[RMDB]
RNA sequence: GGGAACGACUCGAGUAGAGUCGAAAACACUCCUGACGAUGGCUCUAAAGACGUGUUCGUACACUUCUCUGCUAUCCAGAACGAUGGCUACAAAUCCCUGGACGAAGGUCAGAAAGUAUCCUUCACCGCCCCGUAUAAAGUUCGCUUUAUACGGGGCAAAAGAAACAACAACAACAAC
Reactivity to DMS in 0.01 (KOAc 150mM, MgCl2 10mM, bicine 150mM(pH8.5), 24C), signal-to-noise 1, nucleotides 027 to 126: c200a110c110u000c060c020u000g000a120c160g000a070u000g000g010c000u010c100u000a030a120a110g040a010c100g010u000g010u000u000c210g010u000a090c040a010c000u000u000c030u000c090u000g030c030u010a020u000c050c120a040g030a080a120c100g010a050u000g000g020c010u000a030c110a050a040a070u000c020c010c010u000g000g000a090c130g010a020a070g020g000u000c100a140g010a040a100a040g000u000a120u000c000c000u000u000c050a130c100c170
Reactivity to 2A3 in 0.01 (KOAc 150mM, MgCl2 10mM, bicine 150mM(pH8.5), 24C), signal-to-noise 1, nucleotides 027 to 126: c020a080c040u030c000c020u050g020a020c030g060a040u050g010g000c040u050c010u080a070a050a060g010a040c040g010u010g000u090u060c050g060u180a020c020a000c050u050u040c030u060c040u100g000c000u040a010u000c010c010a030g000a120a010c020g030a030u040g050g060c020u050a040c120a040a110a010u070c000c000c000u020g040g030a010c050g030a040a010g000g020u040c020a010g110a020a100a010g040u030a080u050c000c000u040u010c020a020c030c050